[RMDB]
The record gives the reactivity of an RNA of 177 nucleotides to 2A3. Source: RMDB library OK1LIB, as collected in RNAgym.

RNA sequence: GGGAACGACUCGAGUAGAGUCGAAAACAGGCUCGAUCUGACCAUCUGAAGGUCAGCUAUUGGAAGAGAAAGAACAGCCAAGUCCUUAGGACCAGGUCGAGCCAAAACAAAACAAAACAAAAACAAAGAGGUAGCAAGAGUUCGCUCUUGCUACCUCAAAAGAAACAACAACAACAAC
Reactivity to 2A3 in 0.01 (KOAc 150mM, MgCl2 10mM, bicine 150mM(pH8.5), 24C), signal-to-noise 1, nucleotides 027 to 126: c050a010g000g020c000u020c000g000a000u010c000u000g000a070c000c040a090u010c000u090g000a020a000g000g000u030c000a000g000c000u030a000u170u120g100g040a050a050g000a060g070a120a240a100g070a070a110c050a040g000c020c000a130a050g020u120c000c000u000u030a050g000g000a000c000c000a000g000g020u000c000g020a020g000c000c010a000a020a030a000c000a000a000a000a000c020a000a150a000a000c030a000a010a000a000a010c020a000a120a050